Conditions: 150 mM KOAc, 10 mM MgCl2 and 150 mM bicine (pH 8.5), 24 C. Chemical mapping of a 207-nucleotide RNA with 2A3 and DMS. For DMS the reverse transcriptase was MarathonRT. Reactivities are given for positions 27 through 156. Values are in units of 0.01, from 0 to 300, in steps of 10.

[RMDB]
RNA sequence: GGGAACGACUCGAGUAGAGUCGAAAAAGGCAAUUAGCCAUGCAAGAUGCCUUGUAUUCAUUGCCAAUGACCCCCUAUUCAGUGCCAUAGCCUUUUAGGAGUUCCAUUCUGGCUGUGAUGAGCCGCCAAAAAGCAAUAAAAUAUCAUUUUAUUAGCAAAAAUAUAUGCAUUUCGAUGCAUAUAUUUUAAAAGAAACAACAACAACAAC
Reactivity to 2A3 in 0.01 (KOAc 150mM, MgCl2 10mM, bicine 150mM(pH8.5), 24C), signal-to-noise 2, nucleotides 027 to 156: a000g010g020c020a030a010u050u040a110g000c050c040a020u020g000c030a050a030g060a300u210g080c040c000u010u010g000u000a040u020u040c000a030u000u030g010c010c000a110a140u200g190a290c010c010c020c000c000u030a110u030u120c110a050g040u040g040c000c000a070u090a030g020c010c000u060u070u080u050a030g010g010a010g030u120u050c040c010a040u100u130c040u060g000g020c000u010g010u010g010a030u030g020a010g010c000c040g020c040c020a070a080a030a040a000g010c000a000a010u070a060a000a080a000u180a090u120c010a000u010u050u040u040a040u090u100a040g010c030a000
Reactivity to DMS in 0.01 (KOAc 150mM, MgCl2 10mM, bicine 150mM(pH8.5), 24C), signal-to-noise 3, nucleotides 027 to 156: a060g020g020c000a060a090u000u000a130g000c070c090a110u000g010c040a060a100g030a220u000g010c100c020u010u000g020u010a060u000u010c070a070u020u000g000c000c040a070a150u010g000a210c120c020c010c030c010u010a100u000u000c060a060g010u010g000c020c090a060u000a210g020c030c000u000u020u010u000a080g040g000a150g000u000u000c030c030a170u000u010c060u000g020g020c000u020g020u000g010a110u000g000a220g000c000c030g000c020c030a020a050a060a100a100g010c020a030a040u000a030a010a030a070u000a170u030c030a110u000u000u000u000a030u000u010a160g010c010a030